[RMDB]
RNA sequence: GGGAACGACUCGAGUAGAGUCGAAAAAUUAACUUUGUCGCCAACCCGCUGGUCAAUAUUCAUCUGCAAGGACGUUUCGAUACGUAUCCAAAACGUCGCGGCAUCACGCGCGUUAAAGAGAUGCUGGCAGAAUUUAGCAUUUCGAUGCUAAAUUCUGAAAAGAAACAACAACAACAAC
Reactivity to DMS in 0.01 (KOAc 150mM, MgCl2 10mM, bicine 150mM(pH8.5), 24C), signal-to-noise 2, nucleotides 027 to 126: a050u000u010a060a110c080u020u000u020g020u010c090g020c030c010a060a090c070c050c020g000c100u010g010g010u010c050a080a070u000a050u020u000c050a040u010c050u010g030c090a100a100g010g010a050c090g010u010u000u000c110g000a130u010a040c140g010u000a030u010c010c040a040a120a070a040c020g010u020c020g000c030g000g020c160a050u020c180a060c020g000c050g030c030g000u000u010a020a110a120g010a150g020a030u000g020c070u010g030g010
Reactivity to 2A3 in 0.01 (KOAc 150mM, MgCl2 10mM, bicine 150mM(pH8.5), 24C), signal-to-noise 1, nucleotides 027 to 126: a000u120u030a070a000c040u070u040u090g020u110c000g030c000c000a020a050c040c030c010g060c040u030g010g000u020c050a080a000u080a100u160u070c020a100u040c060u050g050c030a080a010g080g030a050c040g020u000u060u050c040g030a010u020a150c020g010u020a020u000c010c020a000a050a020a020c040g100u140c070g130c010g010g000c020a120u190c020a040c010g010c000g020c000g020u010u030a090a130a000g090a010g000a000u020g040c050u050g080g000